[RMDB]
Chemical mapping of a 177-nucleotide RNA with DMS and 2A3. The DMS profile rests on 15,769 reads. The RNA was probed in 150 mM KOAc, 10 mM MgCl2 and 150 mM bicine (pH 8.5) at 24 C. Reactivities are given for positions 27 through 126.
RNA sequence: GGGAACGACUCGAGUAGAGUCGAAAAGAUAUGGACCCGAAUGAAGAGCCGUAUCGGAAACGAUACCGGCUUGUUUCGAGUCCUAAGUCAAAACUCCUCAAUUGACGUUCGCGUCAAUUGAGGAGAAUCCAAUCAAUAGGUUCGCCUAUUGAUUGGAAAAAGAAACAACAACAACAAC
Reactivity to DMS in 0.01 (KOAc 150mM, MgCl2 10mM, bicine 150mM(pH8.5), 24C), signal-to-noise 8, nucleotides 027 to 126: g010a040u000a300u000g000g000a010c010c010c000g010a010a020u000g000a120a190g000a000g010c000c000g020u000a000u000c000g000g000a120a080a170c010g010a010u000a000c120c110g050g010c000u000u000g000u000u000u000c000g000a030g000u000c000c000u010a030a090g000u000c030a070a090a100a120c010u000c000c000u000c000a010a010u000u000g010a010c000g030u000u010c230g020c020g010u000c000a000a000u000u000g000a000g010g000a000g000a010a050
Reactivity to 2A3 in 0.01 (KOAc 150mM, MgCl2 10mM, bicine 150mM(pH8.5), 24C), signal-to-noise 7, nucleotides 027 to 126: g020a020u070a040u120g010g000a000c000c030c040g010a020a040u240g080a180a230g020a010g030c000c000g010u010a000u000c000g010g030a070a070a010c020g000a000u020a040c170c140g010g000c000u000u020g010u010u030u000c000g000a010g000u000c000c000u020a150a000g060u020c030a010a020a090a240c000u010c000c000u000c000a000a000u000u010g000a000c010g030u050u060c300g040c010g120u010c000a000a000u000u000g000a000g000g000a000g000a000a000